Conditions: 150 mM KOAc, 10 mM MgCl2 and 150 mM bicine (pH 8.5), 24 C. Structure probing data (2A3 and DMS) for a 177-nucleotide construct. The 2A3 profile rests on 2,048 reads. It was measured as part of the RMDB library OK2TST.
[RMDB]
RNA sequence: GGGAACGACUCGAGUAGAGUCGAAAACGUGACCUAAGUCGCUGGUGAAUGCCGGCGGUGCGCUGGUCGGACUUGCCGUAGCCGAGCAUGCCGCAGUCCGCCGCCUCACCAGUGAUGUCGGCGAUGCGCAUUAGUGCACCUUCGGGUGCACUAAUGCAAAAGAAACAACAACAACAAC
Reactivity to 2A3 in 0.01 (KOAc 150mM, MgCl2 10mM, bicine 150mM(pH8.5), 24C), signal-to-noise 2, nucleotides 027 to 126: c070g050u100g210a250c000c000u060a110a040g020u000c020g020c030u000g040g030u010g010a100a050u080g130c180c020g000g000c000g000g000u010g000c000g020c000u060g110g140u030c080g000g010a150c040u060u170g140c050c080g130u150a000g030c000c010g030a000g080c050a020u140g100c100c020g020c020a030g120u050c010c000g000c010c030g000c000c010u000c010a000c000c000a000g000u020g000a000u020g010u000c030g000g000c050g050a090u130g030c070
Reactivity to DMS in 0.01 (KOAc 150mM, MgCl2 10mM, bicine 150mM(pH8.5), 24C), signal-to-noise 2, nucleotides 027 to 126: c090g000u010g010a080c120c040u010a220a300g040u000c010g000c000u000g010g000u000g000a070a080u010g020c200c040g010g000c000g020g040u000g000c060g010c030u000g010g010u000c010g000g030a070c090u000u000g000c130c140g030u010a210g000c020c000g000a010g010c010a040u010g010c090c090g020c030a030g040u000c010c010g000c000c020g010c070c070u000c000a000c000c020a010g000u000g010a010u000g010u000c250g000g010c040g010a110u010g000c100